[RMDB]
RNA sequence: GGGAACGACUCGAGUAGAGUCGAAAAGAUAUGGACGCACUGAUGACCCACAGUAACAAGUAUCGGAAACGAUACCGCCCUGUGGCAAGGCGCGUCCUAAGUCAAAAGCCAUUCUUCGGAAUGGCAAGACAGCCUAUUAGUUCGCUAAUAGGCUGUCAAAAGAAACAACAACAACAAC
Reactivity to DMS in 0.01 (KOAc 150mM, MgCl2 10mM, bicine 150mM(pH8.5), 24C), signal-to-noise 4, nucleotides 027 to 126: g000a030u000a300u000g000g000a030c010g020c010a030c000u000g000a110u010g000a110c300c000c010a020c000a000g010u020a050a100c220a230a060g000u000a000u010c010g010g000a090a160a200c010g010a000u000a000c000c010g000c300c200c000u000g000u000g000g000c020a070a050g010g020c040g010c010g000u000c000c000u000a010a080g000u000c020a030a100a110a120g020c000c010a010u000u010c000u000u010c180g010g000a020a000u000g000g000c000a010a010
Reactivity to 2A3 in 0.01 (KOAc 150mM, MgCl2 10mM, bicine 150mM(pH8.5), 24C), signal-to-noise 3, nucleotides 027 to 126: g020a030u090a030u130g000g000a000c010g080c010a000c020u110g050a300u100g050a280c000c030c000a000c000a010g110u220a190a070c130a250a020g010u010a000u010c000g010g070a060a050a030c010g000a000u000a020c010c000g020c010c010c000u020g000u010g000g000c020a090a260g020g000c030g000c000g000u000c010c000u000a070a030g040u000c040a050a050a020a050g000c000c020a010u010u020c000u020u040c080g040g000a010a000u000g020g010c000a000a010